[RMDB]
Structure probing data (DMS and 2A3) for a 207-nucleotide construct. The 2A3 profile rests on 594 reads. For 2A3 the reverse transcriptase was SuperScript II with manganese. The reactions ran in a buffer of 150 mM KOAc, 10 mM MgCl2 and 150 mM bicine (pH 8.5), at 24 C. It was measured as part of the RMDB library OK3TST.
RNA sequence: GGGAACGACUCGAGUAGAGUCGAAAAGAUGAUUCCAGUUCGCUUCACGGUACGAGUAGACACAAAGGAGACUUAAUUAUGCACUUACCAAAUGGCGCGCAAAUUUUCGUGGAAACCUCUCGCGGAGAAGAGAUCGAGGCAACCGCUGUCACUAACGUCUUAAGAGGAGCUUCGGCUCCUCUUAAGAAAAAGAAACAACAACAACAAC
Reactivity to DMS in 0.01 (KOAc 150mM, MgCl2 10mM, bicine 150mM(pH8.5), 24C), signal-to-noise 2, nucleotides 027 to 156: g010a210u010g010a170u000u000c000c000a070g000u010u000c080g000c040u000u000c060a130c080g010g020u010a070c060g010a040g040u010a080g020a190c030a120c050a060a090a110g010g020a200g020a100c030u020u010a060a120u010u020a100u000g060c010a090c030u000u000a170c040c070a050a090a080u000g020g020c010g000c050g040c070a050a030a100u000u010u000u010c070g010u010g000g020a100a100a050c030c000u000c020u010c050g000c060g020g040a160g000a040a100g010a080g010a070u000c010g000a090g010g000c020a040a070c010c030g020c030u020g000u000c010a070c080u000a060a100c140g000
Reactivity to 2A3 in 0.01 (KOAc 150mM, MgCl2 10mM, bicine 150mM(pH8.5), 24C), signal-to-noise 1, nucleotides 027 to 156: g060a050u050g040a050u130u000c020c000a010g060u030u050c020g000c000u030u060c060a020c040g080g010u060a010c040g010a050g070u120a030g070a020c050a010c040a020a110a020g060g010a020g050a020c020u090u100a050a040u100u100a030u120g000c000a010c030u040u070a090c080c030a010a000a190u090g050g000c010g000c000g030c090a000a040a070u090u130u040u120c060g000u000g040g070a010a020a020c030c030u030c010u000c030g000c000g050g050a080g040a120a000g080a010g010a030u040c030g000a040g000g060c030a010a010c030c030g040c060u050g000u020c020a020c030u020a130a040c040g000